[RMDB]
The record gives the reactivity of an RNA of 177 nucleotides to 2A3 and DMS.
The reactions ran in a buffer of 150 mM KOAc, 10 mM MgCl2 and 150 mM bicine (pH 8.5), at 24 C.
For DMS, 12,332 sequencing reads were counted.
The 2A3 profile rests on 10,428 reads.
RNA sequence: GGGAACGACUCGAGUAGAGUCGAAAAAGUGAAAAUUCACGAUCUUAAUGUAUAGCUUCCUUCGGAGUGAAGGAUUAGCGCAUCAUCUCAGAAAUUUUCAUUAGGUAUCGUCUUAUAUGCUGAAAAAUCAGCAUUAAUCAUUCGUGAUUAAUGCUGAAAAAGAAACAACAACAACAAC
Reactivity to 2A3 in 0.01 (KOAc 150mM, MgCl2 10mM, bicine 150mM(pH8.5), 24C), signal-to-noise 9, nucleotides 027 to 126: a000g110u090g040a050a010a000a030u090u070c060a020c080g030a040u020c050u070u110a050a030u020g070u050a100u060a160g000c000u000u000c010c000u000u000c030g230g140a300g140u300g060a030a000g010g010a020u060u180a010g000c000g000c020a040u040c010a030u010c060u010c060a040g170a070a120a070u080u030u020u020c010a010u020u050a020g030g030u110a050u090c020g060u000c030u060u110a150u050a070u300g120c090u110g090a090a040a010a020a060
Reactivity to DMS in 0.01 (KOAc 150mM, MgCl2 10mM, bicine 150mM(pH8.5), 24C), signal-to-noise 5, nucleotides 027 to 126: a050g020u000g000a020a030a030a030u000u020c120a200c090g000a020u020c100u010u010a090a020u010g020u030a060u030a170g000c010u000u010c000c010u010u000c000g010g030a140g030u060g000a010a010g010g000a040u040u020a010g060c010g010c110a040u000c070a040u010c120u000c060a150g020a070a030a030u000u000u020u000c000a010u000u010a050g000g020u030a010u000c060g000u010c080u030u020a040u040a050u010g000c040u010g000a030a060a040a100a090